[RMDB]
RNA sequence: GGGAACGACUCGAGUAGAGUCGAAAAGAACUUUGGCCGGCUCGGAAUAGAAUCAGGGGGUGCAAACUGCCCACUUGCAGAAAGGAUUAUAGCAAAUGCGUACCCUAUUGCAAUACAGCCCGGCCAACAUAGACUACUCUAUUCGUAGAGUAGUCAACGAUUACUUAGUCUUCGGACUAAGUAAUCGAAAAGAAACAACAACAACAAC
Reactivity to DMS in 0.01 (KOAc 150mM, MgCl2 10mM, bicine 150mM(pH8.5), 24C), signal-to-noise 2, nucleotides 027 to 156: g010a110a120c120u000u000u010g010g030c010c000g030g010c000u010c060g030g000a190a130u000a150g010a180a090u000c130a070g050g010g000g090g000u010g000c050a060a100a170c190u000g000c010c010c090a060c080u000u000g000c040a120g010a150a060a070g000g010a200u010u020a150u000a080g030c000a050a110a180u010g010c040g030u000a080c000c000c010u000a130u000u000g010c030a080a120u000a110c030a080g010c100c000c090g000g050c030c000a000a000c080a100u000a160g010a030c010u000a020c000u000c000u000a080u000u000c210g030u000a010g000a030g000u000a000g010u010c000a020a040
Reactivity to 2A3 in 0.01 (KOAc 150mM, MgCl2 10mM, bicine 150mM(pH8.5), 24C), signal-to-noise 5, nucleotides 027 to 156: g030a090a030c020u050u000u010g000g000c000c010g000g010c010u060c080g060g050a090a070u130a140g090a070a070u180c070a110g040g000g000g020g000u100g010c030a080a070a060c040u030g000c000c020c010a070c020u020u020g020c030a030g210a070a080a020g060g010a060u100u180a160u300a130g040c020a050a100a130u070g010c020g030u080a070c000c000c000u050a100u030u090g050c050a030a040u050a110c010a030g040c030c030c020g000g000c000c000a000a000c000a000u070a020g000a000c000u000a000c000u000c000u000a020u080u030c170g080u080a000g000a010g000u000a000g000u000c000a000a000